[RMDB]
RNA sequence: GGGAACGACUCGAGUAGAGUCGAAAACGGUAUUGGUCAAGGCUAUACCGACGGCGCACCUUCAAAAGGGCGCUUAAUCCCCGGCCAAGCGCCGAAAUAUGAAUAGACACCGCUGGGCUGGUAGGGCAAAACAUGGCGAUCUUCGGAUCGCCAUGAACAUAUGCCAAACGUUCGCGUUUGGCAUAUGAAAAGAAACAACAACAACAAC
Reactivity to 2A3 in 0.01 (KOAc 150mM, MgCl2 10mM, bicine 150mM(pH8.5), 24C), signal-to-noise 2, nucleotides 027 to 156: c010g000g030u030a050u090u150g020g020u090c070a110a090g090g010c000u000a000u000a010c000c000g000a030c020g000g010c010g000c040a300c080c020u090u120c080a050a070a030a020g000g020g000c000g020c000u000u000a010a010u000c020c010c000c000g000g010c000c010a040a020g020c020g000c040c040g050a080a040a010u250a080u080g070a100a100u070a080g020a020c010a010c030c010g010c040u050g010g010g010c010u010g000g060u090a080g030g050g060c030a070a000a000a010c000a030u000g000g030c000g010a010u000c000u020u050c190g050g050a000u000c010g040c000c000a000u000g000a000a000
Reactivity to DMS in 0.01 (KOAc 150mM, MgCl2 10mM, bicine 150mM(pH8.5), 24C), signal-to-noise 2, nucleotides 027 to 156: c020g020g010u010a060u000u050g120g020u000c040a120a100g080g000c080u000a050u010a040c010c020g000a150c110g030g010c070g000c010a070c030c000u000u100c150a130a140a150a170g000g020g010c000g040c010u000u020a030a110u000c000c000c000c070g000g000c010c020a030a110g030c040g010c040c050g010a030a070a080u000a170u000g010a150a230u000a130g000a170c030a100c050c010g030c010u010g000g000g010c020u010g020g040u000a080g000g000g030c040a050a080a100a210c010a010u000g000g030c000g000a020u000c000u000u000c300g030g000a010u000c020g010c000c000a000u000g000a040a230

Chemical mapping of a 207-nucleotide RNA with 2A3 and DMS.
The reactions ran in a buffer of 150 mM KOAc, 10 mM MgCl2 and 150 mM bicine (pH 8.5), at 24 C.
For DMS the reverse transcriptase was MarathonRT.
The 2A3 profile rests on 1,436 reads.
It was measured as part of the RMDB library M2RFOK.